[RMDB]
RNA sequence: GGGAACGACUCGAGUAGAGUCGAAAACGGGGUCGGUGAAAGUCCGAACCGGCGGUUACGGUCCGCGACCCGGUCGCCUCCAGCGACCGGUUGACCAGGUGAAAUUCCUGGACCGACGGUUAAAGUCAAAAUCAUCCAACGUUCGCGUUGGAUGAAACAUUGUUUAGAUCUUCGGAUCUAAACAAUGAAAAGAAACAACAACAACAAC
Reactivity to DMS in 0.01 (KOAc 150mM, MgCl2 10mM, bicine 150mM(pH8.5), 24C), signal-to-noise 2, nucleotides 027 to 156: c020g020g010g010g030u000c020g000g040u060g010a080a110a280g000u020c010c020g000a040a090c030c020g000g000c020g020g010u000u010a070c090g000g000u000c010c060g040c030g000a110c200c000c000g070g060u000c010g040c000c020u000c220c160a170g010c000g030a030c000c010g010g040u000u000g010a090c000c010a030g050g020u000g000a090a130a300u000u000c000c010u000g010g000a110c010c050g020a030c020g000g010u000u000a060a050a130g010u010c030a050a060a110a230u000c020a010u000c010c000a000a030c000g030u000u010c260g040c040g000u000u000g010g020a000u000g000a000a060a060
Reactivity to 2A3 in 0.01 (KOAc 150mM, MgCl2 10mM, bicine 150mM(pH8.5), 24C), signal-to-noise 1, nucleotides 027 to 156: c010g000g010g010g030u030c020g000g000u020g010a050a010a000g040u020c000c000g000a000a010c010c010g040g000c010g020g000u090u130a060c050g010g030u030c050c000g000c020g000a030c000c000c000g030g000u010c010g040c050c080u300c140c070a030g000c000g040a000c000c010g000g030u000u050g010a010c000c000a000g000g000u000g000a000a000a030u040u010c000c010u010g010g000a020c000c000g020a010c020g010g000u050u120a120a030a010g080u110c080a010a010a020a220u030c000a000u000c000c000a010a000c000g020u030u050c240g030c000g120u010u010g000g000a000u000g000a000a000a000
Notes: This 207-nucleotide RNA was probed chemically with DMS and 2A3. The DMS profile rests on 3,210 reads. For DMS the reverse transcriptase was MarathonRT. Values cover nucleotides 27 to 156. Source: RMDB library M2RFPK, as collected in RNAgym.